Source: RMDB library OK2TRN, as collected in RNAgym. An RNA of 177 nucleotides, treated with 2A3 and DMS and read out base by base. The RNA was probed in 150 mM KOAc, 10 mM MgCl2 and 150 mM bicine (pH 8.5) at 24 C. For 2A3 the reverse transcriptase was SuperScript II with manganese. DMS adducts were read by reverse transcription with MarathonRT.
RNA sequence: GGGAACGACUCGAGUAGAGUCGAAAACUCAAGACAGAGGAACAGGUAGGAAAUCUAUCUGAUGAGGUACUAACUCAGGACAAAGAAGGUGAAGUUUGUACAAGGCAGACAUCUGUUGUCAUGGGUAUCUACGUCUACCAUUCGUGGUAGACGUAGAAAAAGAAACAACAACAACAAC
Reactivity to 2A3 in 0.01 (KOAc 150mM, MgCl2 10mM, bicine 150mM(pH8.5), 24C), signal-to-noise 2, nucleotides 027 to 126: c000u010c010a000a000g100a040c050a020g160a020g190g020a110a000c000a020g000g050u070a000g040g090a250a160a090u110c020u020a000u000c010u010g020a100u060g070a000g020g110u080a050c020u060a060a020c000u020c020a000g030g000a000c010a010a110a000g250a070a030g080g030u060g030a090a010g070u050u080u040g000u040a090c060a100a040g110g000c020a020g030a070c010a040u020c020u050g110u030u020g010u020c010a010u010g020g020g000u040a070
Reactivity to DMS in 0.01 (KOAc 150mM, MgCl2 10mM, bicine 150mM(pH8.5), 24C), signal-to-noise 3, nucleotides 027 to 126: c010u000c020a090a140g020a080c130a050g010a110g020g000a180a200c010a030g010g010u000a010g020g010a100a140a160u010c000u000a010u000c010u000g010a150u010g000a050g010g010u020a080c110u000a110a070c020u000c000a040g000g010a030c050a030a040a030g010a100a060g010g010u000g000a210a110g020u000u000u000g000u010a080c180a120a080g010g010c040a030g010a080c030a050u000c030u000g000u000u000g000u000c020a030u010g000g000g000u000a090